[RMDB]
The data come from the RNA Mapping Database (RMDB), library M2PK50. The record gives the reactivity of an RNA of 177 nucleotides to 2A3 and DMS. For DMS, 10,109 sequencing reads were counted.

RNA sequence: GGGAACGACUCGAGUAGAGUCGAAAACGCGUCAGAUUCGUCUGACGCGAAAGCAUAGAACAGCGCUAUCAUGUAUUAUAGAUCUAUGCAACUAUAGCGCUAAAACGAUACCGUUCGCGGUAUCGAAGAAACUAAUAAUCUUCGGAUUAUUAGUUUCAAAAGAAACAACAACAACAAC
Reactivity to 2A3 in 0.01 (KOAc 150mM, MgCl2 10mM, bicine 150mM(pH8.5), 24C), signal-to-noise 9, nucleotides 027 to 126: c010g000c000g000u000c000a000g010a040u020u090c110g060u010c100u000g010a000c000g000c000g000a010a000a000g020c010a060u060a110g080a130a060c050a070g000c000g000c010u010a010u040c030a050u070g070u070a060u130u110a120u140a140g120a080u050c040u070a010u040g010c010a010a020c020u050a010u020a030g010c030g000c010u040a020a040a010a030c010g000a000u010a010c000c000g020u030u040c220g000c000g080g000u000a000u000c000g000a020a030
Reactivity to DMS in 0.01 (KOAc 150mM, MgCl2 10mM, bicine 150mM(pH8.5), 24C), signal-to-noise 7, nucleotides 027 to 126: c020g020c000g000u000c000a000g000a040u000u010c200g020u010c000u000g000a010c000g020c000g010a010a030a090g000c080a070u000a050g000a130a150c180a030g020c000g020c000u000a020u000c160a150u010g010u000a060u010u000a280u000a090g010a100u010c090u000a020u010g000c020a070a100c140u000a050u000a020g010c000g010c010u000a020a030a080a150c010g000a010u000a000c010c010g020u000u010c180g030c010g010g010u000a000u000c000g010a050a070
Conditions: 150 mM KOAc, 10 mM MgCl2 and 150 mM bicine (pH 8.5), 24 C.